[RMDB]
RNA sequence: GGGAACGACUCGAGUAGAGUCGAAAAUAGGGAAUGAAGGAAUACAAAAAGUGAUGACCAAAAAUCGCUAUGAAAAUAUCAGCAGAUUUUUUCAUUUCAAUGAUUCAUCAGUUGAACCAAGGCGAGACAUAUUAGCACCGUUCGCGGUGCUAAUAUGAAAAGAAACAACAACAACAAC
Reactivity to 2A3 in 0.01 (KOAc 150mM, MgCl2 10mM, bicine 150mM(pH8.5), 24C), signal-to-noise 1, nucleotides 027 to 126: u190a040g000g000g060a000a020u050g000a040a010g000g000a030a030u080a110c040a020a200a050a010a000g000u030g060a030u010g020a090c020c080a050a210a000a000a000u020c010g000c010u010a040u090g070a090a020a040a070u200a050u030c030a020g170c070a090g020a040u000u000u020u000u080u050c010a000u020u120u000c010a040a090u070g060a020u040u100c030a040u020c000a010g050u060u020g070a010a010c050c010a040a050g050g000c030g040a010g000a030
Reactivity to DMS in 0.01 (KOAc 150mM, MgCl2 10mM, bicine 150mM(pH8.5), 24C), signal-to-noise 3, nucleotides 027 to 126: u000a070g000g000g010a080a040u010g000a060a070g010g000a020a070u010a090c090a080a070a080a080a070g020u000g020a040u000g020a150c110c190a060a060a070a060a070u010c010g010c010u000a020u000g010a020a090a070a040u000a020u000c060a130g040c180a200g000a010u000u000u000u000u000u000c000a010u000u000u010c060a070a060u000g000a030u000u000c040a030u000c110a090g030u000u000g000a040a060c080c070a040a060g010g000c020g010a080g000a270
Conditions: 150 mM KOAc, 10 mM MgCl2 and 150 mM bicine (pH 8.5), 24 C. This 177-nucleotide RNA was probed chemically with 2A3 and DMS. For 2A3 the reverse transcriptase was SuperScript II with manganese.